[RMDB]
RNA sequence: GGGAACGACUCGAGUAGAGUCGAAAAGGGGUCAGAAACGACGAUCGAGAAGGAGCAUCGAUCUAUACUGAAGCCUCCACGGUAUAGGGAGCUCCGACUCGGGAGUUUCUGACGGAGGCACCCAAAAGUCAGUCCUACGUUCGCGUAGGACUGACAAGUGACUUCCCAGAUUCGUCUGGGAAGUCACAAAAGAAACAACAACAACAAC
Reactivity to 2A3 in 0.01 (KOAc 150mM, MgCl2 10mM, bicine 150mM(pH8.5), 24C), signal-to-noise 2, nucleotides 027 to 156: g000g010g200g010u000c010a000g010a010a010a010c000g300a070c020g000a000u000c000g000a000g000a040a070g010g010a000g010c010a010u300c040g000a000u000c000u000a000u000a000c020u030g040a110a050g010c000c000u020c000c010a010c000g020g010u000a000u000a000g000g000g010a000g010c010u010c030c020g000a000c000u010c000g000g020g000a000g010u000u010u000c000u010g000a000c000g010g000a000g000g000c000a030c000c000c000a020a150a020a020g000u010c000a010g000u020c000c010u000a010c000g030u030u120c240g000c000g110u000a000g010g000a010c000u010g000a000c000a010a000